Chemical mapping of a 177-nucleotide RNA with DMS and 2A3. It was measured as part of the RMDB library RFM100. For DMS, 2,744 sequencing reads were counted. For DMS the reverse transcriptase was MarathonRT.
RNA sequence: GGGAACGACUCGAGUAGAGUCGAAAAUAAAUUCUGGAACUAAUUAUAUAGAGGAUAUGUCUCAAUUUGUUCUGCAUUAAUGCCACAGUGGGGAUGGAGGCCAGGCCGUGGCCAGAGCAGAUACGUAACAACAGGGUUAGUUCGCUAACCCUGUUGUAAAAGAAACAACAACAACAAC
Reactivity to DMS in 0.01 (KOAc 150mM, MgCl2 10mM, bicine 150mM(pH8.5), 24C), signal-to-noise 2, nucleotides 027 to 126: u040a060a060a060u040u010c010u010g000g000a040a110c060u020a070a050u030u020a030u020a170u030a070g030a030g000g000a180u000a040u000g020u000c030u010c030a080a050u000u080u030g000u000u000c000u010g000c080a140u060u040a030a130u030g000c000c000a000c060a060g060u010g000g050g000g000a080u020g010g000a130g010g010c000c010a030g010g020c080c040g000u000g020g020c000c110a100g000a080g040c040a010g000a020u000a010c160g020u000a130
Reactivity to 2A3 in 0.01 (KOAc 150mM, MgCl2 10mM, bicine 150mM(pH8.5), 24C), signal-to-noise 2, nucleotides 027 to 126: u080a000a060a000u060u030c020u040g020g080a000a040c030u070a160a000u280u030a120u040a080u040a120g020a010g000g100a020u030a070u210g120u020c000u000c000a040a090u020u040u060g040u010u000c000u000g000c020a050u090u190a200a090u160g000c000c010a050c000a020g030u060g120g000g010g020a050u090g050g000a010g060g030c000c000a000g090g000c000c020g000u000g030g020c000c000a000g000a020g040c000a000g040a030u110a100c090g090u070a090